[RMDB]
RNA sequence: GGGAACGACUCGAGUAGAGUCGAAAAUAAGCGUGUAGGGCGUGACCUAGGCAAAUCCGGGUCACAUUCAGCCUGAGACGUGAUGCGUAGCCGAUUGAGGCGAAUUCAGUGAUCCUAUGCUGCCGAGACAUACCAAGCACUUCGGUGCUUGGUAUGUAAAAGAAACAACAACAACAAC
Reactivity to DMS in 0.01 (KOAc 150mM, MgCl2 10mM, bicine 150mM(pH8.5), 24C), signal-to-noise 5, nucleotides 027 to 126: u030a080a280g010c020g000u020g000u010a300g000g000g010c010g040u000g020a000c000c000u010a100g020g000c230a110a120a160u070c020c020g000g000g020u010c000a000c000a100u010u030c300a170g020c000c010u000g010a140g010a030c030g000u010g000a110u020g000c110g030u000a180g000c000c000g010a100u010u030g010a170g020g010c030g010a090a080u010u020c060a040g000u010g000a100u020c010c010u000a070u020g000c000u000g000c070c050g000a130g000
Reactivity to 2A3 in 0.01 (KOAc 150mM, MgCl2 10mM, bicine 150mM(pH8.5), 24C), signal-to-noise 6, nucleotides 027 to 126: u110a030a010g010c010g000u010g010u020a020g000g000g030c020g010u010g010a000c000c000u120a260g050g010c160a100a080a040u180c000c000g000g000g000u020c000a000c010a010u160u180c050a010g000c020c000u050g000a030g010a010c000g000u010g010a030u110g020c050g040u060a020g000c000c020g130a190u090u260g110a080g020g010c020g000a010a020u110u060c020a010g020u010g100a020u040c000c000u010a030u100g020c020u010g000c010c040g110a090g010
Structure probing data (DMS and 2A3) for a 177-nucleotide construct. DMS adducts were read by reverse transcription with MarathonRT. The RNA was probed in 150 mM KOAc, 10 mM MgCl2 and 150 mM bicine (pH 8.5) at 24 C.